[RMDB]
RNA sequence: GGGAACGACUCGAGUAGAGUCGAAAAGUUGUGAUUGCAGUGACUGAUGUGGUUUUCAGUUUCUGUGGAGGAAGGGUUGCAACGCUUUUUCAAGAGAAUGACCGUGCGUCCGCUUAAACGAAGCGUCUCUACCCUAUCGUUUCGACGAUAGGGUAGAAAAAGAAACAACAACAACAAC
Reactivity to DMS in 0.01 (KOAc 150mM, MgCl2 10mM, bicine 150mM(pH8.5), 24C), signal-to-noise 3, nucleotides 027 to 126: g010u000u010g020u010g000a140u000u020g000c000a030g010u000g010a050c050u010g010a020u020g010u010g040g010u020u020u010u010c020a050g000u000u010u010c000u010g030u000g010g010a080g010g030a120a080g020g000g030u010u000g010c100a060a050c110g000c050u030u010u000u010u010c120a110a060g000a070g000a070a090u020g010a060c020c020g000u030g010c090g020u010c020c130g000c010u000u000a030a080a080c200g010a020a060g000c010g010u000c080
Reactivity to 2A3 in 0.01 (KOAc 150mM, MgCl2 10mM, bicine 150mM(pH8.5), 24C), signal-to-noise 4, nucleotides 027 to 126: g020u030u020g010u000g070a090u090u100g000c000a000g030u000g030a010c020u010g030a010u010g100u260g140g100u280u040u040u050c010a000g010u000u000u000c010u000g020u050g020g060a050g000g040a060a060g040g000g010u030u100g030c020a040a060c040g030c030u080u000u020u050u050c050a110a040g020a000g070a140a090u120g000a030c020c040g100u080g060c030g010u020c010c030g030c060u050u150a060a120a000c100g020a040a010g000c010g000u010c010